[RMDB]
RNA sequence: GGGAACGACUCGAGUAGAGUCGAAAAGACGCGUGAGUGUGUGAGUGUGCGCGCUUGGAGCGUGUUAGGCGAGUGCGUGCGCCCACCCCUGCGCCCCUCCUCCCGCUUACACUUUGAUCUUAUUUGAUAUGUAUAAUGUCUUCGGACAUUAUACAUAAAAAGAAACAACAACAACAAC
Reactivity to 2A3 in 0.01 (KOAc 150mM, MgCl2 10mM, bicine 150mM(pH8.5), 24C), signal-to-noise 9, nucleotides 027 to 126: g060a030c070g030c020g030u090g150a110g020u160g000u020g010u010g030a050g020u030g000u010g000c010g000c010g010c010u030u050g130g050a160g090c100g020u150g170u230u200a090g040g100c010g010a000g000u020g000c010g000u020g000c000g000c010c000c000a000c000c010c000c000u010g000c010g000c000c010c000c000u010c010c010u010c010c010c000g000c040u080u130a050c090a040c070u110u070u170g060a090u060c030u060u140a180u160u170u080g080a070
Reactivity to DMS in 0.01 (KOAc 150mM, MgCl2 10mM, bicine 150mM(pH8.5), 24C), signal-to-noise 8, nucleotides 027 to 126: g020a110c100g010c020g010u000g000a060g020u020g020u010g030u010g010a060g010u000g010u000g010c020g010c000g010c010u010u000g000g010a140g010c070g020u010g000u010u020a090g010g010c020g010a020g010u000g010c020g020u000g000c010g010c010c020c010a030c010c020c040c010u000g000c020g010c010c020c010c000u000c030c020u010c010c010c020g010c120u010u010a060c110a060c090u010u010u010g000a100u020c060u010u010a110u020u010u010g010a240